[RMDB]
An RNA of 177 nucleotides, treated with 2A3 and DMS and read out base by base. The RNA was probed in 150 mM KOAc, 10 mM MgCl2 and 150 mM bicine (pH 8.5) at 24 C. For DMS the reverse transcriptase was MarathonRT. The data come from the RNA Mapping Database (RMDB), library OK2TRN. The 2A3 profile rests on 3,274 reads. Values cover nucleotides 27 to 126.
RNA sequence: GGGAACGACUCGAGUAGAGUCGAAAAUUGCUGGUGGUGGCCUGUGAUGAUGGCGUGAUGGCACAAACCCGCGAGCAUCUGGCCAUCCUGCGGCUGACGGGCCGCCCGACAUUGACGGUGGCGCUGAGUUCGCCAUAAAAUUCGUUUUAUGGCGAACAAAAGAAACAACAACAACAAC
Reactivity to 2A3 in 0.01 (KOAc 150mM, MgCl2 10mM, bicine 150mM(pH8.5), 24C), signal-to-noise 3, nucleotides 027 to 126: u130u060g030c040u090g010g120u110g010g020u010g010g030c010c020u110g030u080g090a120u040g020a020u030g070g040c010g030u070g020a120u070g030g010c070a030c050a300a130a080c040c010c010g020c010g030a040g040c020a020u040c020u060g100g000c000c000a020u020c010c010u040g060c020g040g010c030u050g040a020c030g000g000g000c000c010g040c000c000c000g040a050c040a120u070u150g020a030c020g020g020u000g000g020c090g010c090u030g010a030
Reactivity to DMS in 0.01 (KOAc 150mM, MgCl2 10mM, bicine 150mM(pH8.5), 24C), signal-to-noise 5, nucleotides 027 to 126: u010u000g020c020u000g020g040u010g020g040u000g010g000c010c010u010g020u010g010a090u010g000a040u010g000g010c030g030u010g010a070u010g020g010c060a090c170a060a110a170c050c040c040g020c060g010a090g000c030a040u000c050u000g010g010c020c010a030u010c010c090u000g010c050g010g010c020u000g010a110c100g000g000g000c000c010g010c010c010c010g000a090c110a100u010u000g010a100c180g000g000u000g000g020c040g010c050u000g000a210